[RMDB]
RNA sequence: GGGAACGACUCGAGUAGAGUCGAAAAGGGUACGGGGGAUCAGGGUUUGAUUCCGGAGAGGGAGCCUGAGAAACGGCUACCAGGUCUAAGGACAGCAGCAGGCGCGAAACUUGCCCAAUUGGAGAGACCGCUUUAUAUAGUUCGCUAUAUAAAGCGGAAAAGAAACAACAACAACAAC
Reactivity to DMS in 0.01 (KOAc 150mM, MgCl2 10mM, bicine 150mM(pH8.5), 24C), signal-to-noise 1, nucleotides 027 to 126: g010g000g010u020a070c070g010g020g000g020g030a120u010c090a060g000g010g020u010u030u000g000a030u010u000c040c000g000g020a110g010a130g000g010g010a040g000c010c000u000g010a170g030a080a090a150c160g000g000c020u000a050c070c030a080g020g000u010c000u020a070a070g000g000a080c030a040g000c030a040g000c080a030g030g000c020g020c040g020a090a060a100c070u000u010g000c030c010c070a100a100u000u000g010g000a100g010a120g000a240